[RMDB]
RNA sequence: GGGAACGACUCGAGUAGAGUCGAAAAGCAGAAAUGGAGGAGAGUGCCGAAACUGCCACGAAGAAGAGCACAGCGAUACCCGCAGUCCCCUGUUUGCUCUUGACGUUCUCCACCGGAAGGGACUGUGGAUCGUACCCGCGUUCGCGCGGGUACGAUCAAAAGAAACAACAACAACAAC
Reactivity to 2A3 in 0.01 (KOAc 150mM, MgCl2 10mM, bicine 150mM(pH8.5), 24C), signal-to-noise 2, nucleotides 027 to 126: g160c040a000g040a060a220a000u160g010g000a050g020g040a050g000a000g050u250g050c050c000g090a130a090a090c060u060g000c020c010a020c050g090a030a060g150a050a010g030a000g010c000a000c060a020g030c040g040a070u110a210c030c000c000g000c050a000g010u000c000c000c000c020u040g030u020u130u110g010c000u000c000u000u040g100a090c040g080u060u000c020u020c050c020a050c060c000g080g090a020a010g040g000g000a000c000u000g010u050g010